The record gives the reactivity of an RNA of 177 nucleotides to 2A3 and DMS. Values are in units of 0.01, from 0 to 300, in steps of 10. The DMS profile rests on 7,126 reads. It was measured as part of the RMDB library TTRDES. The RNA was probed in 150 mM KOAc, 10 mM MgCl2 and 150 mM bicine (pH 8.5) at 24 C.
RNA sequence: GGGAACGACUCGAGUAGAGUCGAAAAGAUAUGGAAUAUACAGGCUUUUGACGCUCGAACACUCGGAAACGAGUGGGAGAGCGAUAAGCCUGACGUAUUCCUAAGUCAAAACGUUGGUUCGCCAACGGGAGAUAAUACUGUUCGCAGUAUUAUCUCCAAAAGAAACAACAACAACAAC
Reactivity to 2A3 in 0.01 (KOAc 150mM, MgCl2 10mM, bicine 150mM(pH8.5), 24C), signal-to-noise 5, nucleotides 027 to 126: g030a010u090a050u180g010g000a000a010u010a000u010a040c000a010g020g010c020u060u080u170u250g300a170c070g010c010u000c000g030a040a010c000a010c010u000c010g030g030a070a120a050c000g010a010g000u000g010g020g000a080g000a000g000c000g000a000u000a000a000g000c000c000u010g000a010c020g000u000a010u010u000c000c000u010a130a030g090u040c050a010a030a090a130c020g000u000u010g060g040u080u100c300g060c150c000a000a010c030g020
Reactivity to DMS in 0.01 (KOAc 150mM, MgCl2 10mM, bicine 150mM(pH8.5), 24C), signal-to-noise 7, nucleotides 027 to 126: g010a040u000a300u010g010g010a000a010u000a010u010a120c010a020g000g000c010u000u000u000u010g020a250c090g010c000u000c000g020a300a280c000a000c000u000c000g020g010a120a120a210c010g010a020g020u010g010g000g000a300g000a010g010c020g010a020u000a000a020g020c000c000u000g000a030c100g000u000a010u000u000c000c000u000a080a140g010u000c030a080a070a100a300c010g010u000u000g000g010u000u010c290g020c010c000a000a020c020g000